RNA sequence: GGGAACGACUCGAGUAGAGUCGAAAACCACUCUACCGAAAGGUAGAGUGGAUGGGAUGUGGAAACACAUCCCUUUAUAACCAUACUUAAAGCGCUAGUAUGGCGUGGAGAGUUGUAGGACGAAAGUCGUACUUCUCUCGACGAAAAUUGCGCAAAAGGAUGCGUUCAGGUUCGCCUGAGCGCAUCCAAAAGAAACAACAACAACAAC
Reactivity to 2A3 in 0.01 (KOAc 150mM, MgCl2 10mM, bicine 150mM(pH8.5), 24C), signal-to-noise 2, nucleotides 027 to 156: c010c000a000c000u010c000u000a000c000c000g050a060a010a040g010g000u000a010g000a010g030u000g000g000a040u040g000g020g000a000u000g010u010g040g030a000a080a010c000a000c000a000u000c000c000c000u000u030u000a030u010a000a020c010c000a010u000a010c000u020u090a170a060a060g000c020g000c030u000a010g020u000a000u000g040g020c010g010u040g160g010a000g000a000g000u000u000g000u000a030g090g040a000c000g040a060a060a050g000u020c220g090u010a000c000u000u030c030u020c000u000c040g010a000c000g000a030a000a020a100u160u210g010c000g000c000a020a050a000a050